RNA sequence: GGGAACGACUCGAGUAGAGUCGAAAAACAAGGGGUGGUAGUCCGCCACUCUAAGGGGACGCCUUUAGAAGAAGAGGCUAGGGGGUAUUCCGGUGUGGGAUACUUAGUAAUAUGCAACGCUAAUUGCUCAAGGAUAGAUGAUUCGUCAUCUAUCCAAGGUGUUAUUUUACUUCGGUAAAAUAACACCAAAAGAAACAACAACAACAAC
Reactivity to 2A3 in 0.01 (KOAc 150mM, MgCl2 10mM, bicine 150mM(pH8.5), 24C), signal-to-noise 2, nucleotides 027 to 156: a020c060a050a050g000g020g010g000u020g030g010u050a130g090u060c000c080g000c000c000a030c000u000c000u030a080a060g010g000g000g000a030c080g080c000c000u030u040u110a110g020a230a010g030a050a010g020a030g000g030c030u090a050g000g020g000g050g000u010a070u040u070c060c020g190g010u170g030u160g050g000g000a010u030a040c020u030u070a010g100u080a060a130u090a060u300g000c020a050a070c090g010c090u060a150a040u110u100g020c040u050c140a090a060g010g000a000u000a000g000a010u010g000a000u070u050c110g050u000c050a000u000c010u000a000u000c000c000a000a000

Description: Conditions: 150 mM KOAc, 10 mM MgCl2 and 150 mM bicine (pH 8.5), 24 C. Chemical mapping of a 207-nucleotide RNA with 2A3. The 2A3 profile rests on 1,199 reads. Source: RMDB library M2RFPK, as collected in RNAgym. Values cover nucleotides 27 to 156.